[RMDB]
RNA sequence: GGGAACGACUCGAGUAGAGUCGAAAAAAGCUGUAGAUCCAUCUGGAAACAUUGGAACUUUAACAAGAACUAUUGUUGUUAAUGAUGGUAUCGGCCCGGUAUUUAAUGGUAUCAAUACUAUUACAGCCCGAGGGAACGAAUUCGUUCGUUCCCUCGGAAAAGAAACAACAACAACAAC
Reactivity to 2A3 in 0.01 (KOAc 150mM, MgCl2 10mM, bicine 150mM(pH8.5), 24C), signal-to-noise 3, nucleotides 027 to 126: a000a000g020c000u000g000u020a000g000a020u020c000c000a000u000c000u010g050g050a080a030a000c020a020u020u120g060g010a040a060c010u000u040u080a100a010c080a010a040g000a020a000c000u050a040u120u060g070u000u000g060u110u070a190a020u150g020a000u000g020g010u150a020u060c000g000g040c000c010c000g000g000u020a090u010u080u080a140a220u210g210g010u210a050u140c050a050a010u000a090c030u040a020u070u050a040c000a000g000c010
Reactivity to DMS in 0.01 (KOAc 150mM, MgCl2 10mM, bicine 150mM(pH8.5), 24C), signal-to-noise 1, nucleotides 027 to 126: a000a100g010c000u000g000u020a040g020a050u040c000c000a080u050c000u000g000g000a240a000a000c000a050u000u000g020g070a020a250c000u000u000u030a160a140c190a110a010g000a030a260c000u000a090u000u000g020u000u000g000u000u010a160a040u000g020a000u020g000g000u040a070u000c000g040g000c000c010c000g020g020u000a070u010u000u000a120a050u000g010g030u010a070u000c140a080a060u000a000c020u020a000u000u000a000c140a030g000c050